An RNA of 177 nucleotides, treated with DMS and read out base by base.
Conditions: 150 mM KOAc, 10 mM MgCl2 and 150 mM bicine (pH 8.5), 24 C.

[RMDB]
RNA sequence: GGGAACGACUCGAGUAGAGUCGAAAAGUGAUCUUGCCAUGCGCCCCACAGCCAAUCCCCAGAUAAUCACCAAAGCGCCAGUAGUUAAGAUUAUGCUGGCAUUGGUAACCUGGCUUGGCAUAGGCCAUAGCCUGGUGAUCUUCGGAUCACCAGGCUAAAAAGAAACAACAACAACAAC
Reactivity to DMS in 0.01 (KOAc 150mM, MgCl2 10mM, bicine 150mM(pH8.5), 24C), signal-to-noise 1, nucleotides 027 to 126: g030u010g010a040u000c050u000u000g000c050c010a090u000g010c110g030c030c000c000c060a110c140a170g020c000c050a040a120u000c170c250c000c050a040g000a030u010a080a030u000c090a060c040c000a040a040a060g000c070g030c000c010a030g000u000a070g000u010u010a070a150g010a110u010u010a080u010g010c020u000g000g000c020a000u000u000g000g000u000a060a130c040c110u010g010g030c090u000u000g010g020c000a080u000a050g000g020c050c100a080